[RMDB]
RNA sequence: GGGAACGACUCGAGUAGAGUCGAAAAAUUUAGGCGCUCCGUGUAAAGCAGUCUCACGCUAAUCUGGCAGACAUGUCAGGGAACCACGAGAUAAAUGUAAGUUAAAAUUCUGGUCCACGAUGAUCCGCCCUAUGAUUUAGUUCGCUAAAUCAUAGGGAAAAGAAACAACAACAACAAC
Reactivity to 2A3 in 0.01 (KOAc 150mM, MgCl2 10mM, bicine 150mM(pH8.5), 24C), signal-to-noise 3, nucleotides 027 to 126: a000u080u090u080a060g020g010c000g020c020u000c020c040g010u000g040u070a140a160a020g000c020a000g020u000c010u010c020a040c080g000c010u040a030a010u020c000u000g010g000c000a000g050a150c100a100u060g000u000c010a010g040g000g000a020a000c010c000a020c060g020a040g010a060u110a050a110a020u140g040u090a050a110g050u020u170a030a110a060a100u130u020c040u050g040g000u060c030c010a040c030g040a030u090g010a060u060c020c050g040
Reactivity to DMS in 0.01 (KOAc 150mM, MgCl2 10mM, bicine 150mM(pH8.5), 24C), signal-to-noise 3, nucleotides 027 to 126: a080u010u010u000a130g000g010c060g010c060u000c030c020g030u000g010u000a040a130a110g010c100a070g010u000c010u000c020a120c080g010c110u010a040a060u000c040u000g000g000c010a040g000a110c300a070u000g020u000c010a040g010g000g000a130a080c060c030a050c100g010a040g000a060u000a070a070a090u010g000u020a080a050g000u010u000a060a080a070a160u000u010c030u010g020g010u000c060c020a040c070g000a060u000g000a070u000c040c090g010